Structure probing data (2A3) for a 207-nucleotide construct. Reactivities are given for positions 27 through 156.
[RMDB]
RNA sequence: GGGAACGACUCGAGUAGAGUCGAAAAAGGUUCGCUAUGGUGCAACUCUUAUUAGUAACUAAUCCAAAGCAAGUAUAGGAGAACAGGUUUUUAACUAUUUUUAGGCAGAUAAAAAAUAGUAUUUGACAAAAUCGAUUGUCGUUCGCGACAAUCGAAACUCAUUCGAACUGUUCGCAGUUCGAAUGAGAAAAGAAACAACAACAACAAC
Reactivity to 2A3 in 0.01 (KOAc 150mM, MgCl2 10mM, bicine 150mM(pH8.5), 24C), signal-to-noise 1, nucleotides 027 to 156: a010g050g010u030u040c030g030c020u020a030u130g010g000u040g050c000a050a030c040u020c060u180u100a090u140u040a120g050u100a080a120c050u040a130a000u000c030c020a070a090a040g010c000a020a020g030u030a020u040a130g040g130a110g030a080a020c030a040g000g090u030u030u000u000u070a010a010c000u010a010u020u020u010u000u010a000g080g000c010a000g080a130u150a020a030a000a000a000a000u010a000g010u000a070u050u060u070g030a010c030a030a180a050a160u030c000g010a000u000u000g020u000c000g000u050u000c220g000c000g060a030c000a000a000u000c000g000a000a000a000